[RMDB]
RNA sequence: GGGAACGACUCGAGUAGAGUCGAAAAUAUUAUAGCGCACUUAAGACGCUGAUCUUUAGUUACCAAGGAACUUUAGUGCUGAGGUCCGAGUUCCAAGGUCCCAUGUCGGACCUUAGCACUAAUUGAAGUUCUCAUAUCGGUUCGCCGAUAUGAGAACAAAAGAAACAACAACAACAAC
Reactivity to DMS in 0.01 (KOAc 150mM, MgCl2 10mM, bicine 150mM(pH8.5), 24C), signal-to-noise 2, nucleotides 027 to 126: u000a090u010u000a100u020a080g000c030g020c070a120c150u000u000a100a120g010a130c020g010c020u000g010a070u010c080u000u000u000a060g010u000u000a070c080c050a130a120g030g010a030a090c080u000u000u000a000g020u000g000c000u010g010a020g010g010u020c000c030g000a040g000u010u010c150c120a040a080g000g000u000c040c000c040a120u010g000u000c030g020g000a030c000c000u000u000a010g000c000a010c010u000a000a010u000u000g010a060a090
Chemical mapping of a 177-nucleotide RNA with DMS. The RNA was probed in 150 mM KOAc, 10 mM MgCl2 and 150 mM bicine (pH 8.5) at 24 C.